Structure probing data (2A3) for a 207-nucleotide construct. For 2A3, 1,038 sequencing reads were counted.
[RMDB]
RNA sequence: GGGAACGACUCGAGUAGAGUCGAAAAACUGACGGUACGCCGUCAGAACGGUAGAAAAGAUGGUUUGAAAACCACGCCUUCUACCAAUAUAGUAAAUAAAUAGGCGGAGCGGUCAUAAGUGACCGCAAAAACAUAUUCAGCUUCGGCUGAAUAUGAACAUCCUUUUGGACUUCGGUCCAAAAGGAUGAAAAGAAACAACAACAACAAC
Reactivity to 2A3 in 0.01 (KOAc 150mM, MgCl2 10mM, bicine 150mM(pH8.5), 24C), signal-to-noise 2, nucleotides 027 to 156: a010c010u010g000a000c000g000g020u070a020c160g010c040c000g000u010c000a000g000a060a000c030g000g000u000a000g030a000a010a000a000g090a300u060g030g020u020u100u190g200a240a210a000a000c010c000a000c000g020c000c000u000u000c000u000a010c000c000a010a010u110a020u030a010g130u050a000a000a180u050a040a030a080u120a040g010g000c000g000g020a000g000c000g000g020u000c040a040u080a300a100g080u040g060a000c000c030g000c000a010a010a010a010a010c000a000u010a000u000u000c000a020g010c000u040u090c140g170g000c000u010g030a000a000u000a000u000g000a000a000